Structure probing data (2A3 and DMS) for a 177-nucleotide construct.
For DMS, 2,842 sequencing reads were counted.
For DMS the reverse transcriptase was MarathonRT.
For 2A3, 2,903 sequencing reads were counted.
Conditions: 150 mM KOAc, 10 mM MgCl2 and 150 mM bicine (pH 8.5), 24 C.
2A3 adducts were read by reverse transcription with SuperScript II with manganese.
Reactivities are rounded to 0.1 and cut off at 0 and 3.
The data come from the RNA Mapping Database (RMDB), library TTRDEL.

[RMDB]
RNA sequence: GGGAACGACUCGAGUAGAGUCGAAAAGAUAUGGAGGGGUGCCGAUAAGAUGUGGUCGGAAACGACCAUACAUCUUUUGACGGCAAAACUCCUAAGUCAAAGACAUGAGUCUUCGGACUCAUGUCAACGUAAGACUCAGGUUCGCCUGAGUCUUACGAAAAGAAACAACAACAACAAC
Reactivity to 2A3 in 0.01 (KOAc 150mM, MgCl2 10mM, bicine 150mM(pH8.5), 24C), signal-to-noise 1, nucleotides 027 to 126: g000a000u040a040u090g010g000a010g000g010g020g020u060g000c030c000g100a160u160a200a010g000a000u000g030u030g010g010u020c000g000g000a030a040a010c000g000a000c010c000a000u020a010c010a000u000c010u040u040u070u240g190a080c010g000g000c000a000a010a030a030c000u000c000c020u000a060a040g010u010c040a160a040a080g000a010c000a020u000g000a000g010u010c050u060u110c300g090g010a010c020u000c000a000u000g010u000c000a000a000
Reactivity to DMS in 0.01 (KOAc 150mM, MgCl2 10mM, bicine 150mM(pH8.5), 24C), signal-to-noise 3, nucleotides 027 to 126: g000a020u000a220u020g000g010a010g020g000g000g030u000g000c010c000g010a190u000a040a020g020a010u000g030u000g010g000u000c000g010g000a090a100a160c020g000a010c000c000a090u010a010c040a020u010c000u000u000u010u020g000a170c090g010g000c000a010a000a040a020c010u010c000c000u000a010a100g010u010c030a110a150a130g010a010c000a010u000g000a020g020u000c000u000u010c200g030g010a010c000u000c000a000u000g000u000c020a030a040